An RNA of 177 nucleotides, treated with DMS and 2A3 and read out base by base. The RNA was probed in 150 mM KOAc, 10 mM MgCl2 and 150 mM bicine (pH 8.5) at 24 C.
[RMDB]
RNA sequence: GGGAACGACUCGAGUAGAGUCGAAAAGGGCGGGCACCGCAUACUGGCCAACUGGCUCACCUGCUGCGGAUGGACGCAAGACGACACCCUGGUACGUCGGCUGGAAAACGAAGUGCUCACCGCCAUCUCCUAGGUAGACGUUCGCGUCUACCUAGGAAAAAGAAACAACAACAACAAC
Reactivity to DMS in 0.01 (KOAc 150mM, MgCl2 10mM, bicine 150mM(pH8.5), 24C), signal-to-noise 2, nucleotides 027 to 126: g000g060g060c020g000g010g000c000a030c030c000g030c130a060u020a090c140u020g000g030c010c020a150a100c070u000g000g000c040u000c040a020c030c090u000g060c050u030g000c020g010g020a080u010g000g050a060c000g050c050a080a080g000a140c070g000a040c020a030c060c050c040u010g000g000u020a060c080g000u010c000g000g000c030u010g010g030a080a030a110a120c010g010a100a050g000u000g000c040u050c000a090c000c030g000c000c030a170u000c120
Reactivity to 2A3 in 0.01 (KOAc 150mM, MgCl2 10mM, bicine 150mM(pH8.5), 24C), signal-to-noise 3, nucleotides 027 to 126: g040g010g000c040g000g000g040c000a020c010c000g000c020a030u180a140c040u030g030g020c000c000a020a080c060u110g100g000c010u040c060a040c000c010u090g120c030u040g010c040g070g000a100u040g160g030a040c000g000c050a030a030g080a080c040g010a000c000a050c020c020c020u040g060g000u070a050c060g010u020c010g010g000c020u030g030g000a070a050a000a020c020g060a180a020g020u030g030c000u030c040a020c010c030g030c000c000a100u070c060

Values cover nucleotides 27 to 126. For DMS the reverse transcriptase was MarathonRT. Source: RMDB library OK1LIB, as collected in RNAgym.